[RMDB]
RNA sequence: GGGAACGACUCGAGUAGAGUCGAAAAAAAGGAGAAAAAUCACCUCCAGAGGACCCCUUCAUCAGCGAACAGAAGAGCUCUGAGCGGAGAGGAGUAAGUCCAUAGCGAUAGGAGGGGAUGCUAGGAGCCAUAUUAGAUACUUCGGUAUCUAAUAUGGAAAAGAAACAACAACAACAAC
Reactivity to 2A3 in 0.01 (KOAc 150mM, MgCl2 10mM, bicine 150mM(pH8.5), 24C), signal-to-noise 2, nucleotides 027 to 126: a000a000a000g170g020a150g040a060a170a060a000a110u050c010a020c040c000u020c000c010a040g080a100g170g030a080c000c010c020c010u020u000c000a040u000c010a020g020c020g040a080a040c000a110g120a080a030g040a120g100c020u010c020u080g100a070g020c100g030g070a050g020a040g060g020a020g000u070a110a000g050u000c020c010a060u080a000g040c030g010a020u070a130g010g000a010g050g000g020g000a000u030g000c030u040a050g040g020a000g050
Reactivity to DMS in 0.01 (KOAc 150mM, MgCl2 10mM, bicine 150mM(pH8.5), 24C), signal-to-noise 2, nucleotides 027 to 126: a040a070a100g010g010a150g000a030a080a060a190a070u020c060a060c170c000u010c010c000a210g020a180g000g000a100c020c020c040c000u010u010c020a060u020c020a060g030c020g010a060a080c140a040g010a060a090g010a200g000c070u000c000u000g000a210g000c060g010g000a020g000a100g000g000a000g010u010a020a130g010u000c020c020a080u020a170g010c070g000a060u000a090g000g020a030g000g020g000g000a020u000g010c040u000a110g010g000a050g000